[RMDB]
RNA sequence: GGGAACGACUCGAGUAGAGUCGAAAAAAAAAGAUAUGGACCAUCGCUAGCUGAUGACCCUACACUAAGCCCAGUCGGAAACGACUGGGUAUGUGUAGGCAAGGCUACGAUGGUCCUAAGUCAAAAAGAAUUGGAAAUGGUUCGCCAUUUCCAAUUCAAAAGAAACAACAACAACAAC
Reactivity to DMS in 0.01 (KOAc 150mM, MgCl2 10mM, bicine 150mM(pH8.5), 24C), signal-to-noise 1, nucleotides 027 to 126: a010a070a000a110a050g000a030u000a300u000g010g020a020c000c000a000u000c000g000c300u030a000g040c000u000g000a070u020g000a090c300c000c000u010a000c000a010c010u000a140a280g000c010c000c000a000g010u000c000g000g000a070a090a160c030g000a000c000u000g000g000g050u000a000u000g000u000g000u000a010g010g000c020a030a040g000g050c000u000a050c000g000a000u000g000g000u000c000c000u000a010a050g000u040c100a050a130a120a070a180